Structure probing data (2A3 and DMS) for a 177-nucleotide construct.
It was measured as part of the RMDB library OK2TST.
For DMS, 713 sequencing reads were counted.
Values are in units of 0.01, from 0 to 300, in steps of 10.
Conditions: 150 mM KOAc, 10 mM MgCl2 and 150 mM bicine (pH 8.5), 24 C.

RNA sequence: GGGAACGACUCGAGUAGAGUCGAAAACAAGGAUCUGAAAGUGGGCUACAUGCCACAGCGCAUUAAACUCGAGCAUACCUUGCCUAUUUCAGUGAACAGAUUCCUCGCUCUGUCACCACGCUGCACGUGGGUUUGAGAUGUUCGCAUCUCAAACCCAAAAAGAAACAACAACAACAAC
Reactivity to 2A3 in 0.01 (KOAc 150mM, MgCl2 10mM, bicine 150mM(pH8.5), 24C), signal-to-noise 1, nucleotides 027 to 126: c040a010a020g070g000a060u020c010u060g020a040a060a040g210u190g010g000g000c010u040a060c040a030u050g000c050c030a070c050a050g030c090g000c040a020u080u180a130a140a040c010u020c090g020a040g030c040a010u040a160c000c040u070u040g040c000c000u000a050u020u000u020c030a010g000u010g040a060a040c000a050g000a040u070u090c000c000u030c040g000c020u060c000u000g020u030c000a060c080c020a030c020g060c000u090g040c030a030c050g050
Reactivity to DMS in 0.01 (KOAc 150mM, MgCl2 10mM, bicine 150mM(pH8.5), 24C), signal-to-noise 2, nucleotides 027 to 126: c070a120a120g010g000a120u000c020u000g000a020a000a020g030u000g000g010g010c010u010a120c300a040u010g000c000c000a100c200a060g050c100g030c160a100u010u010a090a090a080c050u000c070g000a230g000c060a120u000a110c260c080u010u000g000c020c000u000a120u010u000u010c050a000g020u020g000a240a110c140a040g030a150u000u000c010c000u000c090g020c160u000c010u010g000u000c120a060c030c030a020c050g040c140u000g030c110a080c100g000